Chemical mapping of a 177-nucleotide RNA with DMS and 2A3.
In probing experiments dimethyl sulfate is read out at A N1 and C N3, which are open when not base-paired.
The RNA was probed in 150 mM KOAc, 10 mM MgCl2 and 150 mM bicine (pH 8.5) at 24 C.
It was measured as part of the RMDB library M2PK90.
[RMDB]
RNA sequence: GGGAACGACUCGAGUAGAGUCGAAAAUUAAAUGAUGUAGUACGGCCGCCACUGAAGGACGGGUCCUCUCCGAAAGGAGAGUUGAGUAGAGUGUGAGCAGGACCGGGUCCUAGUCACUGGUGAAAAAGAUCCGAAUAAUGUUCGCAUUAUUCGGAUCAAAAGAAACAACAACAACAAC
Reactivity to DMS in 0.01 (KOAc 150mM, MgCl2 10mM, bicine 150mM(pH8.5), 24C), signal-to-noise 3, nucleotides 027 to 126: u020u010a030a090a080u030g000a070u010g010u000a040g010u000a090c060g010g010c020c010g010c030c020a030c060u000g020a070a060g010g010a030c010g010g020g020u000c030c000u000c000u000c000c000g000a100a090a220g010g010a030g000a030g000u010u000g000a100g010u020a090g010a080g010u010g020u010g010a030g030c070a040g000g010a030c020c010g010g050g000u010c030c000u000a080g020u000c020a030c080u010g020g010u010g000a070a030a060a090a110
Reactivity to 2A3 in 0.01 (KOAc 150mM, MgCl2 10mM, bicine 150mM(pH8.5), 24C), signal-to-noise 1, nucleotides 027 to 126: u150u090a000a030a080u160g040a030u170g010u070a040g030u060a040c050g020g050c060c010g000c060c000a030c040u050g010a030a040g000g010a010c020g030g000g040u020c000c000u020c000u020c000c010g040a060a000a050g050g010a050g040a020g000u070u060g010a010g020u150a030g040a090g000u080g000u040g050a020g020c050a030g050g000a000c020c000g130g000g000u030c000c000u020a020g030u040c000a000c020u020g030g010u040g130a090a040a000a000a020